This 177-nucleotide RNA was probed chemically with DMS and 2A3. 2A3 adducts were read by reverse transcription with SuperScript II with manganese. The reactions ran in a buffer of 150 mM KOAc, 10 mM MgCl2 and 150 mM bicine (pH 8.5), at 24 C.

RNA sequence: GGGAACGACUCGAGUAGAGUCGAAAAAAGUGCCGGCUAAGUGUAAACGAUAAAGGAGGUCCCGGGUCGAAGACAGCGGGGAGGUAGGCUUAGAAGCAGCCACCCUUUAAAGAGUGCGUAACAGCUCCUUGACUUUAUAUUUCGAUAUAAAGUCAAGAAAAGAAACAACAACAACAAC
Reactivity to DMS in 0.01 (KOAc 150mM, MgCl2 10mM, bicine 150mM(pH8.5), 24C), signal-to-noise 9, nucleotides 027 to 126: a060a060g010u010g010c020c010g010g000c050u000a060a100g020u000g010u020a050a070a090c080g000a130u020a030a080a080g000g010a120g000g020u010c040c010c030g010g000g020u000c020g010a090a080g010a060c080a070g020c090g000g010g000g000a040g000g020u010a050g010g000c020u000u010a100g010a110a200g020c110a110g010c010c010a120c020c010c020u020u010u010a050a060a100g000a070g010u000g000c050g000u020a060a070c130a130g010c050u000c060
Reactivity to 2A3 in 0.01 (KOAc 150mM, MgCl2 10mM, bicine 150mM(pH8.5), 24C), signal-to-noise 8, nucleotides 027 to 126: a000a010g090u060g020c010c000g020g010c030u050a080a070g030u060g040u150a100a120a020c050g030a070u110a080a100a030g040g020a050g010g060u060c010c000c000g020g000g010u030c040g040a050a030g030a040c030a030g080c040g000g010g010g020a040g040g040u090a060g050g000c000u020u040a090g010a140a020g040c020a000g000c000c000a020c010c000c000u010u080u050a040a030a010g060a020g020u070g010c030g010u030a060a050c010a070g020c010u050c010